[RMDB]
RNA sequence: GGGAACGACUCGAGUAGAGUCGAAAAGUCUAGUUCGCUAGACCUUGUCCUAAGUCGGUACGAGAUUCUCUGUGGCGAUGAGUGUGGUCGGAAACGACCACACGAGCCACUGAGAAUCGAUGAGUACCGAUAUGGAGUGCCCGAGCUUCGGCUCGGGACUACAUAUGCAGUUCGCUGCAUAUGUAGUAAAAGAAACAACAACAACAAC
Reactivity to DMS in 0.01 (KOAc 150mM, MgCl2 10mM, bicine 150mM(pH8.5), 24C), signal-to-noise 2, nucleotides 027 to 156: g000u000c010u000a020g040u010u020c290g070c020u000a010g000a010c000c030u000u000g010u000c040c020u000a120a270g020u000c010g000g000u010a020c030g010a210g010a010u000u000c000u000c000u010g010u000g010g030c000g010a200u010g020a190g060u010g050u000g020g070u000c000g030g000a110a110a300c050g010a060c000c000a000c000a000c000g010a250g020c010c000a010c010u000g010a020g010a020a010u010c010g020a050u000g010a230g030u000a020c000c000g020a010u000a030u010g000g010a140g010u000g010c000c010c010g000a020g020c010u000u010c300g040g000c000u000c000g010g010g000
Reactivity to 2A3 in 0.01 (KOAc 150mM, MgCl2 10mM, bicine 150mM(pH8.5), 24C), signal-to-noise 2, nucleotides 027 to 156: g000u020c000u010a010g000u070u070c280g030c160u000a010g000a020c000c020u080u210g100u030c000c010u030a130a030g020u010c010g000g000u000a000c000g020a040g000a140u000u010c000u000c020u030g010u000g010g000c050g190a300u180g060a150g070u010g030u020g000g030u000c000g010g080a080a100a200c050g000a000c000c000a000c000a000c000g000a020g000c000c000a000c000u010g000a000g010a000a000u000c000g000a020u030g080a020g000u000a010c000c000g000a000u010a030u070g060g010a110g070u110g030c020c000c010g000a000g010c050u150u200c300g080g000c000u010c000g000g000g000